[RMDB]
RNA sequence: GGGAACGACUCGAGUAGAGUCGAAAAGAUAUGGACCGAACAGGGAGCUGGCCUCGGAAACGAGGUUCAGCGAAGAACUGUCGGUCCUAAGUCAAAAGCUUUGAAUGAGUUCGCUCAUUCAAAGCAAGCUAUUUACCUACUUCGGUAGGUAAAUAGCAAAAGAAACAACAACAACAAC
Reactivity to DMS in 0.01 (KOAc 150mM, MgCl2 10mM, bicine 150mM(pH8.5), 24C), signal-to-noise 3, nucleotides 027 to 126: g000a020u000a110u000g000g010a010c000c000g000a070a040c010a020g000g000g000a110g040c000u000g010g000c010c020u000c000g020g000a020a020a060c000g010a010g000g000u010u020c010a000g030c000g020a050a100g000a210a230c010u010g010u000c000g000g000u000c000c010u000a000a070g000u010c020a130a050a170a120g010c000u000u000u000g010a020a000u000g010a010g000u000u010c250g010c000u000c000a010u000u010c000a000a000a030g010c000a020a030
Reactivity to 2A3 in 0.01 (KOAc 150mM, MgCl2 10mM, bicine 150mM(pH8.5), 24C), signal-to-noise 3, nucleotides 027 to 126: g000a000u010a010u040g000g000a010c000c020g030a170a060c020a010g010g060g040a060g020c000u010g010g000c020c000u010c010g010g010a020a010a010c010g000a000g040g060u160u260c050a000g010c010g010a030a000g010a010a000c010u010g000u000c000g030g000u000c000c000u000a000a000g000u000c000a020a060a090a170g000c000u020u000u000g010a010a000u010g000a010g060u050u210c300g080c120u000c000a000u020u010c000a010a000a000g000c000a000a000